This 177-nucleotide RNA was probed chemically with 2A3 and DMS. It was measured as part of the RMDB library OK2TST. For DMS, 8,265 sequencing reads were counted. For DMS the reverse transcriptase was MarathonRT. For 2A3 the reverse transcriptase was SuperScript II with manganese. The reactions ran in a buffer of 150 mM KOAc, 10 mM MgCl2 and 150 mM bicine (pH 8.5), at 24 C.
[RMDB]
RNA sequence: GGGAACGACUCGAGUAGAGUCGAAAACGCAUCAGCAAUAGCGUUGACAAGUUCUGUAUCAACCUCUGAUUUAGCUAGUUUGUCAUCAAUCUUUAAAUCAUGUAUCGCCUUGGCAACGUGCACCAAGACCUCCUGUCUAAUUCGUUAGACAGGAGGUAAAAGAAACAACAACAACAAC
Reactivity to 2A3 in 0.01 (KOAc 150mM, MgCl2 10mM, bicine 150mM(pH8.5), 24C), signal-to-noise 7, nucleotides 027 to 126: c050g060c030a130u130c080a100g080c040a050a170u080a130g010c020g010u000u020g010a010c000a010a020g010u140u110c060u120g090u160a100u120c050a030a030c000c010u000c020u010g030a040u010u000u040a030g010c030u010a020g030u030u030u050g120u120c070a150u120c010a140a050u000c030u010u080u050a030a030a020u020c030a010u170g030u040a050u080c040g060c080c000u000u010g010g000c000a000a030c030g020u050g020c020a020c030c030a060a010g090
Reactivity to DMS in 0.01 (KOAc 150mM, MgCl2 10mM, bicine 150mM(pH8.5), 24C), signal-to-noise 7, nucleotides 027 to 126: c160g000c070a110u010c150a130g000c080a090a070u010a170g030c030g010u000u000g000a040c040a030a050g010u000u010c060u000g020u010a070u000c170a100a040c020c020u010c030u000g000a020u000u000u010a020g010c280u000a020g010u000u000u000g010u000c180a180u000c040a020a030u000c010u010u000u000a010a030a030u010c030a020u010g010u010a050u000c050g010c220c010u000u000g000g010c010a030a030c020g020u000g000c130a160c060c070a070a100g010